Structure probing data (DMS and 2A3) for a 177-nucleotide construct. Source: RMDB library OK2TST, as collected in RNAgym. The 2A3 profile rests on 992 reads. 2A3 adducts were read by reverse transcription with SuperScript II with manganese. The reactions ran in a buffer of 150 mM KOAc, 10 mM MgCl2 and 150 mM bicine (pH 8.5), at 24 C. Values cover nucleotides 27 to 126.
[RMDB]
RNA sequence: GGGAACGACUCGAGUAGAGUCGAAAAAGUAUUACACUAUGCAUGGCACAGAGAAAGCUAUGUUGGCGGACCUGCAAAAGUACGAUCUCAGCACACAAGGCUUUGUGUUGCCGUGCGUGUUCGCCAACUCGCACGUGCCAUUCGUGGCACGUGCGAGAAAAGAAACAACAACAACAAC
Reactivity to DMS in 0.01 (KOAc 150mM, MgCl2 10mM, bicine 150mM(pH8.5), 24C), signal-to-noise 1, nucleotides 027 to 126: a040g010u010a020u010u000a110c080a070c050u010a160u000g010c000a010u000g010g020c000a020c080a040g000a080g000a130a030a050g000c130u000a110u000g000u000u000g040g000c000g010g000a010c000c130u000g000c140a100a040a090a060g020u000a070c180g000a100u000c070u000c120a110g000c090a040c020a010c050a040a180g010g000c210u010u000u000g000u000g000u000u000g030c040c040g030u000g000c010g000u000g020u000u010c010g010c000c040a050a050
Reactivity to 2A3 in 0.01 (KOAc 150mM, MgCl2 10mM, bicine 150mM(pH8.5), 24C), signal-to-noise 1, nucleotides 027 to 126: a000g080u090a080u160u120a080c000a010c110u050a040u090g020c010a020u050g000g000c050a020c020a210g070a000g100a160a060a020g010c030u090a020u170g000u010u030g050g010c000g000g020a000c020c030u000g000c020a070a030a120a060g040u080a030c030g100a130u000c030u000c120a010g040c000a000c000a010c000a110a080g270g110c050u180u090u020g040u000g010u070u100g050c040c000g000u010g010c000g000u060g020u070u050c000g000c070c000a010a040